[RMDB]
RNA sequence: GGGAACGACUCGAGUAGAGUCGAAAAGGGGUCUUCUUUGUCAGGUGCCUGACGCUCUUGGAUUUAUGGCUGAAGCCUCCACGGCCAUUGUCAGAGCGGAUGGCACCUUGGAUUUAAGAAGACGGAGGCACCCAAAAGCCAGAGUUCGCUCUGGCAAGUAAUCGUAUGUGUUCGCACAUACGAUUACAAAAGAAACAACAACAACAAC
Reactivity to 2A3 in 0.01 (KOAc 150mM, MgCl2 10mM, bicine 150mM(pH8.5), 24C), signal-to-noise 2, nucleotides 027 to 156: g070g020g050g010u000c000u030u000c000u060u000u020g010u000c030a050g000g000u020g000c000c000u050g080a040c000g010c000u040c000u080u210g170g000a090u280u300u100a040u070g000g000c000u020g030a150a110g080c020c070u080c090c010a020c030g000g010c020c000a000u000u030g010u000c000a020g000a010g020c040g020g020a030u060g010g000c000a000c000c000u000u020g000g000a000u170u000u000a010a000g010a000a010g000a000c010g000g010a020g000g010c080a100c020c030c010a040a170a020a000g000c020c000a000g000a000g000u120u250c170g050c080u020c000u000g000g000c000a000a000